RNA sequence: GGGAACGACUCGAGUAGAGUCGAAAAGAUAUGGAAUGGGCUAGGGAGCUUAGUAUCGGAAACGAUACAAGCAUCGAUCUAGUCCCAUUCCUAAGUCAAAAUCGUGGUUUCUUCGGAAACCACGAAAGUCAACUUUGAUGUUCGCAUCAAAGUUGACAAAAGAAACAACAACAACAAC
Reactivity to 2A3 in 0.01 (KOAc 150mM, MgCl2 10mM, bicine 150mM(pH8.5), 24C), signal-to-noise 1, nucleotides 027 to 126: g000a010u040a020u090g000g010a020a010u010g000g000g010c000u010a060g130g110g080a100g030c000u020u030a090g000u000a010u000c020g000g030a060a000a010c000g000a010u000a010c000a020a020g010c050a140u300c070g180a120u110c000u020a000g000u040c010c010c010a000u000u000c000c000u010a010a030g010u020c000a020a020a010a230u100c000g010u000g000g010u000u010u000c000u020u050c130g160g000a020a000a000c030c000a000c010g000a010a020a000
Reactivity to DMS in 0.01 (KOAc 150mM, MgCl2 10mM, bicine 150mM(pH8.5), 24C), signal-to-noise 1, nucleotides 027 to 126: g000a020u010a300u010g000g000a010a020u000g030g000g020c000u000a000g010g000g010a090g000c000u000u010a100g020u000a010u020c000g000g000a180a030a180c010g020a020u000a000c010a010a010g040c020a260u010c240g000a060u000c000u020a000g000u020c000c010c020a000u000u000c000c000u000a020a070g020u000c040a090a040a160a180u000c000g010u000g010g000u000u000u000c010u010u010c240g010g030a010a000a010c010c000a010c000g000a010a010a070